[RMDB]
Structure probing data (2A3 and DMS) for a 177-nucleotide construct. Source: RMDB library OK2TRN, as collected in RNAgym. For 2A3, 939 sequencing reads were counted. Conditions: 150 mM KOAc, 10 mM MgCl2 and 150 mM bicine (pH 8.5), 24 C. For DMS the reverse transcriptase was MarathonRT.

RNA sequence: GGGAACGACUCGAGUAGAGUCGAAAACUUGUGAGACUGAGUCGAGGGCCCCUGGAAUGCUUCACUGGGCAACAGGCAUGCCCAUAAAAAUACCGUGGCCGCCAGAUCUGCAAUCUGCCAUCGGGGCCACCCGUGAGGUAUUCGUACCUCACGGGUGAAAAGAAACAACAACAACAAC
Reactivity to 2A3 in 0.01 (KOAc 150mM, MgCl2 10mM, bicine 150mM(pH8.5), 24C), signal-to-noise 1, nucleotides 027 to 126: c030u080u120g030u040g190a100g060a010c040u060g010a000g040u040c030g050a080g000g000g070c010c000c000c040u000g020g020a180a060u080g000c010u020u080c120a110c140u050g000g060g000c000a040a060c080a080g120g000c050a090u120g000c040c000c000a010u100a040a090a000a000a000u110a070c050c020g060u060g040g000c000c010g060c000c060a070g000a130u020c060u070g000c010a000a160u040c030u130g000c030c020a040u130c130g060g140g000g000c000
Reactivity to DMS in 0.01 (KOAc 150mM, MgCl2 10mM, bicine 150mM(pH8.5), 24C), signal-to-noise 2, nucleotides 027 to 126: c060u010u000g020u000g000a130g010a070c040u000g000a080g010u000c050g010a130g010g000g000c000c160c020c020u000g000g010a110a030u010g010c040u020u000c070a080c140u010g000g000g000c020a050a030c100a080g010g020c130a130u010g020c030c010c010a040u010a000a060a070a070a030u000a080c040c040g000u000g000g010c020c060g000c060c030a090g020a040u000c070u000g010c050a080a080u010c060u010g010c010c130a090u000c080g000g030g000g010c080